[RMDB]
RNA sequence: GGGAACGACUCGAGUAGAGUCGAAAAUGCGGCGGCCCUGCCGGUCAUGCGUACGCAGCUUCGGCAAUUCGGUGUUGGCAAGACGAGCCAAAUCCUGCGCCUCGGCCGAAAGUACGAAACGGCCCGAAUAUAGGAUGACGUUCGCGUCAUCCUAUAUAAAAGAAACAACAACAACAAC
Reactivity to DMS in 0.01 (KOAc 150mM, MgCl2 10mM, bicine 150mM(pH8.5), 24C), signal-to-noise 3, nucleotides 027 to 126: u000g030c050g010g020c040g010g010c020c030c050u000g000c020c040g010g010u010c100a100u020g040c030g000u000a060c080g010c070a070g020c130u000u000c100g010g000c040a090a120u000u010c140g000g010u000g020u010u000g020g000c020a090a120g000a110c180g000a140g020c000c030a030a090a070u000c020c030u000g020c120g010c040c010u010c150g010g000c010c010g010a020a050a050g010u010a070c110g010a030a100a110c080g000g000c020c040c030g010a090
Reactivity to 2A3 in 0.01 (KOAc 150mM, MgCl2 10mM, bicine 150mM(pH8.5), 24C), signal-to-noise 1, nucleotides 027 to 126: u070g000c030g020g010c010g010g080c010c020c020u030g030c000c000g020g000u090c050a070u120g010c010g030u040a030c030g070c080a020g000c000u050u020c020g030g000c040a030a040u180u090c070g040g010u130g080u130u040g040g000c030a040a050g160a090c100g060a020g010c000c000a010a000a010u060c000c020u020g000c000g000c020c020u020c060g000g000c030c000g080a070a060a000g060u050a040c040g020a140a030a060c030g030g000c000c020c020g140a100
The record gives the reactivity of an RNA of 177 nucleotides to DMS and 2A3. Conditions: 150 mM KOAc, 10 mM MgCl2 and 150 mM bicine (pH 8.5), 24 C. Values cover nucleotides 27 to 126. For DMS the reverse transcriptase was MarathonRT.